The record gives the reactivity of an RNA of 207 nucleotides to DMS and 2A3. Values cover nucleotides 27 to 156. 2A3 adducts were read by reverse transcription with SuperScript II with manganese.
RNA sequence: GGGAACGACUCGAGUAGAGUCGAAAAAUUGCAUCAUACAGCUUACGACAUCAACUGCAUUUGGAUCAGGCUACAUACACUCAUUGUCGGCUGUCGCUAGUGUAUUAUAGACUUUAUAAAUCAAGUGCUGAGAUACAUGUGUCCAACUUGCAGACGCAGUUGUACGGAAUUUCGAUUCCGUACAACUAAAAGAAACAACAACAACAAC
Reactivity to DMS in 0.01 (KOAc 150mM, MgCl2 10mM, bicine 150mM(pH8.5), 24C), signal-to-noise 3, nucleotides 027 to 156: a110u000u000g040c030a110u000c050a170u000a090c060a070g010c030u000u000a170c040g030a130c040a120u010c050a060a100c030u010g000c000a050u000u000u000g010g010a080u010c090a070g020g000c000u000a040c050a090u000a040c040a050c020u000c080a130u000u000g020u010c020g030g010c040u000g010u010c050g010c050u000a110g030u000g010u000a020u010u000a120u000a080g000a030c020u010u000u000a270u000a120a080a100u010c080a030a100g030u000g020c000u000g000a140g010a140u000a060c050a030u000g000u000g010u000c010c020a040a060c080u010u000g000c040a050g010a100c080g030c080
Reactivity to 2A3 in 0.01 (KOAc 150mM, MgCl2 10mM, bicine 150mM(pH8.5), 24C), signal-to-noise 9, nucleotides 027 to 156: a000u140u110g020c040a060u060c030a040u130a190c070a060g020c010u140u090a060c070g090a060c050a110u110c070a080a110c020u020g000c010a030u020u030u020g040g010a040u070c070a060g060g010c010u020a010c030a030u080a030c030a020c070u090c050a150u060u170g060u090c050g050g030c040u040g010u060c020g000c040u040a040g030u000g010u020a020u030u030a080u070a040g010a000c000u080u080u030a170u110a120a150a070u120c060a030a010g020u050g160c020u030g030a040g010a130u020a030c020a030u100g030u010g020u020c000c000a020a030c090u010u050g000c010a020g020a060c050g010c080